Structure probing data (2A3 and DMS) for a 207-nucleotide construct. The 2A3 profile rests on 2,937 reads. For DMS, 1,989 sequencing reads were counted. Reactivities are rounded to 0.1 and cut off at 0 and 3. For DMS the reverse transcriptase was MarathonRT. It was measured as part of the RMDB library OK3TST.

RNA sequence: GGGAACGACUCGAGUAGAGUCGAAAACGACCUCCUGACGGGUCGGACAUAGCGUCAGGAUCAUCCGUGACAGUCACCACGGUAAUCAUGUGACUGAUGAUGGUUUUCCAUCUUAAUCUGACUGUGUCGUAGCAGUCUACAGUACUAUGACAUUAGAGGCUAGUAUAGCAUUCGUGCUAUACUAGCCAAAAGAAACAACAACAACAAC
Reactivity to 2A3 in 0.01 (KOAc 150mM, MgCl2 10mM, bicine 150mM(pH8.5), 24C), signal-to-noise 4, nucleotides 027 to 156: c010g000a010c000c000u020c000c000u020g000a000c000g010g000g010u010c030g070g060a080c090a100u190a040g090c000g000u000c000a000g010g000a010u070c050a030u040c000c000g000u000g030a030c030a000g010u010c000a000c020c000a000c000g030g080u090a050a030u070c120a050u080g000u000g000a000c020u000g000a020u020g000a010u000g000g140u140u230u280u070c000c000a010u010c000u040u090a160a090u120c200u090g020a010c000u000g000u000g000u040c010g010u010a010g000c010a010g010u000c060u060a060c050a030g030u030a020c000u000a000u020g020a000c000a040u070u110a100g090a040
Reactivity to DMS in 0.01 (KOAc 150mM, MgCl2 10mM, bicine 150mM(pH8.5), 24C), signal-to-noise 1, nucleotides 027 to 156: c070g000a300c000c000u030c050c010u010g030a070c040g020g000g020u010c020g010g020a130c120a090u020a130g000c000g030u030c030a070g040g060a070u000c050a050u020c010c000g030u000g000a160c010a110g010u000c040a160c000c030a020c000g030g050u010a070a030u010c240a140u000g000u000g000a050c000u020g030a080u000g020a030u000g030g020u010u000u010u000c030c000a050u000c020u020u000a110a160u010c090u000g000a150c040u010g020u000g000u000c020g000u000a090g020c010a030g010u000c040u030a150c120a190g020u000a030c000u000a050u000g010a060c010a030u020u010a110g020a300